[RMDB]
RNA sequence: GGGAACGACUCGAGUAGAGUCGAAAAGAUAUGGAUAGAACCGAAUGUCGAUGCCAUGACAUGCUCCGGAUCGGAAACGAUCCGAAGAGCAACAGCAUGCAUCGACAUUCGGUUCUAUCCUAAGUCACACCGAAAAUAACUUCGGUUAUUUUCGGUGAAAAGAAACAACAACAACAAC
Reactivity to DMS in 0.01 (KOAc 150mM, MgCl2 10mM, bicine 150mM(pH8.5), 24C), signal-to-noise 1, nucleotides 027 to 126: g010a030u010a300u000g000g000a030u010a020g000a010a000c010c000g000a030a020u000g000u000c000g000a020u000g000c160c050a020u000g020a050c090a190u000g030c000u000c000c000g010g010a010u000c000g030g030a110a160a220c030g000a020u010c000c000g020a050a080g010a030g010c000a000a110c170a230g010c010a000u000g020c010a000u000c000g020a000c010a000u010u000c000g000g000u000u020c020u010a000u000c000c010u020a000a120g000u010c020a300
Conditions: 150 mM KOAc, 10 mM MgCl2 and 150 mM bicine (pH 8.5), 24 C.
Chemical mapping of a 177-nucleotide RNA with DMS.
For DMS, 1,188 sequencing reads were counted.